[RMDB]
RNA sequence: GGGAACGACUCGAGUAGAGUCGAAAAUAGUAAUACUCACUAUAUAAAGUGGAUAUGAACACCACAUAAUUGAGGUAUUAAUGGAAACUUUUUAAUACAACAUAUCACAACAAUACUAUAGUAAAACUAUGGUUUUACUAUAGUAGGAUAAUAACCAUACAGAAUUUAAAUUCGUUUAAAUUCUGUAAAAAGAAACAACAACAACAAC
Reactivity to 2A3 in 0.01 (KOAc 150mM, MgCl2 10mM, bicine 150mM(pH8.5), 24C), signal-to-noise 1, nucleotides 027 to 156: u090a010g100u020a010a010u060a120c000u060c010a020c030u050a020u100a100u060a300a190a050g010u030g010g010a000u090a080u120g040a050a000c030a050c050c000a010c010a060u290a190a070u110u040g010a000g000g050u030a000u000u040a060a010u010g170g010a170a150a000c060u120u080u030u130u260a090a150u150a040c030a070a020c000a060u140a040u190c050a010c040a210a130c020a140a040u070a030c030u000a000u000a000g000u000a000a000a000a000c010u040a280u300g080g000u000u000u000u000a000c000u000a010u030a010g000u000a000g000g000a000u040a200a080u230a040a000c000c180a040
This 207-nucleotide RNA was probed chemically with 2A3. Source: RMDB library OK3TST, as collected in RNAgym.